[RMDB]
RNA sequence: GGGAACGACUCGAGUAGAGUCGAAAAGAUAUGGAUACCUCAGUACUCGCCAGAGAGGGCUUACAGCUCGGAAACGAGCUGUAAGCCUCCCCACCUCUGGAACUACGAGGAACUGGUAUCCUAAGUCCAAGUUAUCAAACUUCGGUUUGAUAACUUGAAAAGAAACAACAACAACAAC
Reactivity to DMS in 0.01 (KOAc 150mM, MgCl2 10mM, bicine 150mM(pH8.5), 24C), signal-to-noise 1, nucleotides 027 to 126: g000a010u000a260u000g000g000a000u000a000c020c000u010c060a060g020u000a220c010u000c000g000c000c000a000g000a030g010a150g010g000g050c010u010u010a000c000a040g010c000u020c020g000g020a000a040a300c030g020a060g030c000u000g020u000a020a010g020c000c010u010c070c060c050c050a300c170c000u000c000u000g010g000a050a000c130u040a300c090g000a030g040g010a130a140c190u010g000g000u000a010u000c000c020u000a010a110g030u000c030